[RMDB]
RNA sequence: GGGAACGACUCGAGUAGAGUCGAAAAGUAUCUCGCCAGAAUCGGUGGACUGCAAGGCAUCUGUCCCUCGGCUUGGACUAGAGCUAACUCCAGAACACAAAUUUGUAGAGACCAAGAGAUGGUCCCACGUAUCGCAGCGAUUCGUCGCUGCGAUACGAAAAGAAACAACAACAACAAC
Reactivity to DMS in 0.01 (KOAc 150mM, MgCl2 10mM, bicine 150mM(pH8.5), 24C), signal-to-noise 1, nucleotides 027 to 126: g090u000a090u000c040u010c060g020c100c140a110g000a050a050u000c090g060g010u000g020g000a130c010u000g010c160a150a150g000g030c030a220u000c030u000g010u010c010c000c040u010c150g010g040c150u010u020g020g010a040c020u010a030g000a120g000c010u000a050a060c080u010c230c020a070g030a080a050c090a020c020a000a040a180u000u000u000g020u000a100g000a110g000a110c020c030a090a100g000a100g010a050u000g010g000u000c000c030c010a100
Reactivity to 2A3 in 0.01 (KOAc 150mM, MgCl2 10mM, bicine 150mM(pH8.5), 24C), signal-to-noise 1, nucleotides 027 to 126: g050u050a080u030c010u040c040g010c020c030a120g070a120a140u060c050g150g050u080g010g000a020c040u040g050c030a100a130g030g000c020a280u020c050u060g040u040c030c050c010u060c100g120g050c150u060u100g040g020a040c010u060a030g000a010g020c000u050a080a030c010u030c070c000a060g110a200a000c070a000c000a040a120a090u080u010u090g060u060a030g030a000g040a040c050c000a110a000g050a010g010a090u060g030g070u030c020c000c000a030

An RNA of 177 nucleotides, treated with DMS and 2A3 and read out base by base. The reactions ran in a buffer of 150 mM KOAc, 10 mM MgCl2 and 150 mM bicine (pH 8.5), at 24 C. Reactivities are given for positions 27 through 126.